RNA sequence: GGGAACGACUCGAGUAGAGUCGAAAAGAUAUGGAUUGGAGCAUCUUUUGACGAUUGACGUUCGGAAACGAACGGAGAUCGAUAAGAUGCCCAAUCCUAAGUCAAAAGGUUAUGUUCGCAUAACCAACUUACCUUGAAGCUUCGGCUUCAAGGUAAGAAAAGAAACAACAACAACAAC
Reactivity to 2A3 in 0.01 (KOAc 150mM, MgCl2 10mM, bicine 150mM(pH8.5), 24C), signal-to-noise 2, nucleotides 027 to 126: g030a020u100a060u180g000g030a010u000u010g020g020a300g030c000a010u000c030u100u220u140u220g300a200c080g000a000u000u000g020a000c010g000u000u010c000g000g030a020a150a070c000g000a000a010c030g010g010a020g000a000u000c000g020a020u020a100a000g000a000u000g010c000c010c000a000a000u030c000c010u020a010a010g030u000c080a020a020a130a150g000g000u000u000a000u000g080u050u140c300g080c180a000u010a020a020c000c000a000a060
Reactivity to DMS in 0.01 (KOAc 150mM, MgCl2 10mM, bicine 150mM(pH8.5), 24C), signal-to-noise 1, nucleotides 027 to 126: g020a010u010a300u020g000g000a010u000u010g000g000a230g030c000a000u000c000u000u000u000u000g000a150c210g000a000u000u010g030a300c000g000u010u000c000g020g000a120a210a300c000g030a000a000c000g010g010a280g000a000u000c000g000a170u000a000a000g020a080u000g020c000c040c000a000a000u010c010c000u000a010a070g010u030c010a120a050a110a140g010g000u000u000a000u000g000u000u010c300g040c000a000u000a000a010c010c010a060a140